[RMDB]
RNA sequence: GGGAACGACUCGAGUAGAGUCGAAAAGGUCAUUUGACGCUCUAAGGCGGAUUUCGUUUCAACUGAAACUUGCAUGGAAUUCCUCACAAAUAAAUACUUAGUGUUCAUUCUAAACCCAUCGAAUCCGGUACCACUGUAAGUUCGCUUACAGUGGUACAAAAGAAACAACAACAACAAC
Reactivity to 2A3 in 0.01 (KOAc 150mM, MgCl2 10mM, bicine 150mM(pH8.5), 24C), signal-to-noise 4, nucleotides 027 to 126: g030g020u060c050a090u070u080u230g010a020c010g040c030u000c030u050a030a060g080g000c030g010g050a010u020u070u040c040g030u050u010u080c150a260a200c060u150g020a100a020a030c010u050u110g020c060a060u120g000g040a020a030u100u000c020c000u050c010a060c030a050a190a020u230a090a090a020u130a110c020u030u040a040g000u030g040u060u030c020a050u040u000c000u050a060a090a070c000c020c010a050u090c080g040a080a040u040c030c020g080
Reactivity to DMS in 0.01 (KOAc 150mM, MgCl2 10mM, bicine 150mM(pH8.5), 24C), signal-to-noise 4, nucleotides 027 to 126: g000g030u010c050a160u000u000u000g010a070c150g010c030u010c060u010a050a090g030g010c090g000g000a080u000u010u010c040g030u010u000u000c050a110a130c130u020g020a050a080a070c100u000u000g010c300a070u000g000g020a060a080u010u010c020c020u000c090a060c160a060a070a090u000a030a080a090u000a110c080u000u000a060g000u000g010u010u000c070a080u000u000c060u000a040a090a070c050c010c010a070u010c080g010a070a080u000c030c070g010

Structure probing data (2A3 and DMS) for a 177-nucleotide construct.
The DMS profile rests on 2,366 reads.
2A3 adducts were read by reverse transcription with SuperScript II with manganese.
The data come from the RNA Mapping Database (RMDB), library OK2TRN.